[RMDB]
RNA sequence: GGGAACGACUCGAGUAGAGUCGAAAAGUUCAAAGUUCUGCGGUCCUUGGGCCUGACGGGUGCUCAGCCCAGAGCAGAUGCGUGGGAGCGCAUGUUGACUGAGUGGCUGACCACGUGGCCACAUACCAGGAAGAGCUUCCAACAGCACAGGACUGUCAAUAGCCCUUAAGUUCGCUUAAGGGCUAUUAAAAGAAACAACAACAACAAC
Reactivity to 2A3 in 0.01 (KOAc 150mM, MgCl2 10mM, bicine 150mM(pH8.5), 24C), signal-to-noise 2, nucleotides 027 to 156: g050u090u060c060a090a050a070g000u020u020c010u030g010c020g040g010u020c010c060u090u070g010g010g030c020c000u050g060a040c030g070g000g100u130g010c030u000c010a020g010c040c010c000a030g000a020g000c040a000g010a050u020g010c020g010u050g010g040g010a070g070c010g010c060a040u060g070u100u070g080a070c020u010g020a020g060u050g030g000c010u010g030a110c000c010a080c130g040u090g010g000c000c000a030c000a010u060a030c010c060a020g080g030a040a090g040a020g030c000u050u040c020c010a030a070c010a080g030c010a030c010a060g000g070a020c000u020g020u060c000
Reactivity to DMS in 0.01 (KOAc 150mM, MgCl2 10mM, bicine 150mM(pH8.5), 24C), signal-to-noise 2, nucleotides 027 to 156: g000u000u000c010a110a110a120g000u000u000c010u000g020c040g040g000u000c000c050u020u000g000g020g010c030c020u000g000a110c120g010g030g020u000g010c030u000c030a060g000c000c010c010a080g010a130g040c020a110g030a070u000g020c030g010u000g010g010g000a160g010c000g030c030a080u000g010u000u000g030a180c020u000g010a160g050u010g030g010c060u000g010a090c000c040a060c130g020u010g020g040c000c010a040c070a120u000a130c110c030a160g010g000a210a090g010a050g020c040u000u010c010c020a070a160c040a050g000c010a080c020a060g010g000a080c010u000g030u000c120
Chemical mapping of a 207-nucleotide RNA with 2A3 and DMS. The data come from the RNA Mapping Database (RMDB), library OK3TST. Reactivities are given for positions 27 through 156. The DMS profile rests on 3,333 reads.